Chemical mapping of a 177-nucleotide RNA with 2A3 and DMS. The RNA was probed in 150 mM KOAc, 10 mM MgCl2 and 150 mM bicine (pH 8.5) at 24 C. For 2A3 the reverse transcriptase was SuperScript II with manganese. For DMS the reverse transcriptase was MarathonRT. The DMS profile rests on 3,396 reads.

RNA sequence: GGGAACGACUCGAGUAGAGUCGAAAAGUCGCCUCCUUCGGGAGGCGACAAAUACAGAGACUACGCAACUCUCAAAAACACAACAAAAGUGUAAAAGCGUAGAAACAUCCACGUUCGCGUGGAUGAACUAUUACAAUAGCUUCGGCUAUUGUAAUAGAAAAGAAACAACAACAACAAC
Reactivity to 2A3 in 0.01 (KOAc 150mM, MgCl2 10mM, bicine 150mM(pH8.5), 24C), signal-to-noise 2, nucleotides 027 to 126: g000u000c000g030c000c010u000c010c020u040u060c120g120g000g000a000g000g000c000g010a010c010a000a000a000u020a000c000a010g010a000g010a020c020u010a000c010g000c030a140a090c020u000c010u000c030a030a020a060a110a020c020a010c010a290a000c060a090a180a040a080g000u020g000u010a010a060a030a040g000c000g000u000a010g050a010a030a000c000a000u000c000c000a000c010g000u040u040c210g010c000g090u010g010g000a000u000g000a010a020
Reactivity to DMS in 0.01 (KOAc 150mM, MgCl2 10mM, bicine 150mM(pH8.5), 24C), signal-to-noise 3, nucleotides 027 to 126: g010u000c010g010c000c000u000c000c000u020u010c160g020g040g010a020g000g040c000g020a010c000a000a030a100u010a110c210a060g010a020g010a080c040u000a000c020g000c010a130a050c000u010c000u010c180a050a050a100a100a040c000a010c010a040a100c190a070a110a140a140g000u010g000u020a030a060a050a130g000c000g010u010a010g000a170a120a200c000a000u010c000c000a010c010g010u010u010c170g000c020g050u000g010g010a010u000g010a070a120